Record summary
An RNA of 177 nucleotides, treated with DMS and 2A3 and read out base by base. The reactions ran in a buffer of 150 mM KOAc, 10 mM MgCl2 and 150 mM bicine (pH 8.5), at 24 C. The DMS profile rests on 10,799 reads. DMS adducts were read by reverse transcription with MarathonRT. 2A3 adducts were read by reverse transcription with SuperScript II with manganese. Source: RMDB library OK2TRN, as collected in RNAgym. Values cover nucleotides 27 to 126.
RNA sequence: GGGAACGACUCGAGUAGAGUCGAAAAGCUAUAUACGGCAUAUUAUACGUACGAUUAGCCGAUUAAUGCCGGCUAGCAUUAUAAUCGAUUAUAUAUACGGCCGUAUAGCCGAUGCUAGCAUCGAUCGCAGUUAUAAAACGUUCGCGUUUUAUAACUGAAAAGAAACAACAACAACAAC
Reactivity to DMS in 0.01 (KOAc 150mM, MgCl2 10mM, bicine 150mM(pH8.5), 24C), signal-to-noise 8, nucleotides 027 to 126: g000c030u010a060u000a080u000a040c000g000g010c020a090u000a090u000u000a030u010a090c090g010u010a070c060g000a040u000u000a040g010c050c030g010a120u000u000a100a070u010g010c150c030g000g010c050u000a050g010c140a060u000u010a100u010a100a030u000c020g010a110u000u000a070u000a020u000a060u000a080c140g010g010c000c010g010u000a010u000a020g010c060c030g010a030u000g010c060u000a110g010c020a050u000c040g000a130u010c180g000
Reactivity to 2A3 in 0.01 (KOAc 150mM, MgCl2 10mM, bicine 150mM(pH8.5), 24C), signal-to-noise 6, nucleotides 027 to 126: g010c020u020a020u000a000u010a280c000g000g000c010a000u030a020u100u090a040u020a040c060g080u030a090c020g030a080u050u030a000g000c000c010g020a020u050u210a170a050u130g130c050c000g030g010c020u040a020g020c030a090u130u160a120u220a150a030u050c000g020a060u200u020a030u040a010u000a000u000a120c130g060g000c000c010g010u020a010u020a010g000c000c010g000a010u010g010c040u080a070g050c000a030u020c020g050a020u130c080g000